[RMDB]
RNA sequence: GGGAACGACUCGAGUAGAGUCGAAAAAAUCACCUCCAGAGGACCCCUUCAGCGAACAGAAGAGCGCUUCGUGCGGUAGGAGAAAGACCAUAGCGAUAGGGGGAGAUGCUAGGAGUAGGGGGAGACCGUAUAUAAUUUUGUUCGCAAAAUUAUAUACAAAAGAAACAACAACAACAAC
Reactivity to DMS in 0.01 (KOAc 150mM, MgCl2 10mM, bicine 150mM(pH8.5), 24C), signal-to-noise 2, nucleotides 027 to 126: a100a080u000c040a090c120c000u000c040c040a150g020a090g000g010a210c050c020c030c010u000u000c150a110g020c020g000a040a050c080a150g020a070a070g000a070g010c060g010c060u010u000c060g020u000g010c090g020g000u010a030g030g010a090g020a080a110a100g010a040c020c000a060u000a140g030c030g000a100u000a060g010g000g010g000g000a050g000a070u010g000c040u010a120g020g010a060g010u010a060g010g000g010g020g010a110g000a060c180c080
Reactivity to 2A3 in 0.01 (KOAc 150mM, MgCl2 10mM, bicine 150mM(pH8.5), 24C), signal-to-noise 2, nucleotides 027 to 126: a000a000u050c020a040c020c030u060c030c010a030g030a030g130g070a040c010c020c020c000u040u070c050a030g020c010g020a030a000c050a110g130a180a020g080a090g010c030g000c030u020u060c050g040u070g020c020g070g000u030a030g010g160a110g050a040a060a010g060a020c010c000a030u100a010g020c010g050a030u100a100g020g010g010g020g000a000g010a020u100g020c010u060a050g020g020a040g040u070a040g020g010g000g030g000a030g040a000c020c070